[RMDB]
RNA sequence: GGGAACGACUCGAGUAGAGUCGAAAACAUAAGAUGACGAGGACCCCACUCAUCGGGGUCCGCAGUCUCAUCCUUUCUUACCUGAUGGCCGGCAUGGUCCCAGCCUCCUCGCUGGCGCCGGCUGGGCAACGCACAGUGUUCGCACUGUGCAAAAGAAACAACAACAACAAC
Reactivity to DMS in 0.01 (KOAc 150mM, MgCl2 10mM, bicine 150mM(pH8.5), 24C), signal-to-noise 7, nucleotides 027 to 129: c160a070u070a070a040g020a010u000g010a030c040g000a120g030g000a050c030c000c020c010a150c300u090c190a110u080c200g000g020g000g070u020c010c020g030c080a090g020u000c050u020c050a090u010c060c050u010u000u020c050u040u060a130c090c020u000g020a070u090g050g000c000c000g040g000c000a110u090g020g030u040c280c010c000a070g020c020c070u000c100c040u000c210g030c020u030g040g000c190g040c020c010g000g070c030u000g000g000g000c150a080a060c130
Reactivity to 2A3 in 0.01 (KOAc 150mM, MgCl2 10mM, bicine 150mM(pH8.5), 24C), signal-to-noise 1, nucleotides 027 to 129: c070a040u190a080a070g030a070u140g000a000c010g010a050g000g000a000c000c000c010c000a040c070u280c060a200u210c150g000g000g000g000u000c000c000g000c010a010g020u000c000u010c020a050u040c010c020u060u130u060c020u080u120a120c020c030u060g150a190u180g190g010c000c000g000g000c060a100u160g070g050u110c040c000c030a010g010c000c020u120c020c040u110c070g020c000u020g000g000c010g000c000c000g040g000c000u020g010g000g000c020a050a030c070

The record gives the reactivity of an RNA of 170 nucleotides to DMS and 2A3. The reactions ran in a buffer of 150 mM KOAc, 10 mM MgCl2 and 150 mM bicine (pH 8.5), at 24 C. Reactivities are given for positions 27 through 129. 2A3 adducts were read by reverse transcription with SuperScript II with manganese.